[RMDB]
RNA sequence: GGGAACGACUCGAGUAGAGUCGAAAACGCAAUCCGCUCUAGCGGGGUUGAAUUCCUCAUUUGAGGCAUCGUAAUUGUUUGGUCUGCCCUUGACAAGUGGUGUUGAAGGUUGGGUCUUGCGCAAUGGGAACCUGUGAACCAUGUCAGGUCCGGAAGGGUUUAUGCCUUACUUCGGUAAGGCAUAAACAAAAGAAACAACAACAACAAC
Reactivity to 2A3 in 0.01 (KOAc 150mM, MgCl2 10mM, bicine 150mM(pH8.5), 24C), signal-to-noise 2, nucleotides 027 to 156: c050g070c010a000a060u120c030c000g020c040u130c070u280a030g000c020g010g030g030g000u000u050g030a060a120u060u060c010c000u060c100a100u110u030u270g030a030g000g070c050a070u060c030g060u060a100a090u160u230g040u110u090u150g040g010u050c000u000g010c050c000c040u050u050g000a010c010a090a090g040u030g100g020u010g010u010u050g020a040a010g090g000u050u020g010g000g000u000c000u050u050g070c050g010c200a060a030u040g000g010g010a000a040c000c010u010g050u050g060a080a060c030c040a030u060g060u050c030a000g000g060u000c000c010g010g000a080a050g020g010
Reactivity to DMS in 0.01 (KOAc 150mM, MgCl2 10mM, bicine 150mM(pH8.5), 24C), signal-to-noise 1, nucleotides 027 to 156: c150g000c090a060a100u000c030c040g020c020u010c120u000a120g010c100g030g000g010g050u000u010g030a060a150u010u020c000c000u010c090a300u010u010u040g050a050g030g000c110a080u000c050g000u010a080a120u010u000g020u000u010u000g020g000u000c020u000g000c030c050c040u020u000g000a050c060a080a170g010u000g000g050u000g020u000u000g000a060a030g040g030u010u000g010g030g000u000c040u010u000g000c090g010c170a090a150u010g000g040g010a060a060c000c010u000g030u010g020a060a090c060c050a060u000g000u000c070a060g000g030u010c020c000g120g000a100a170g000g000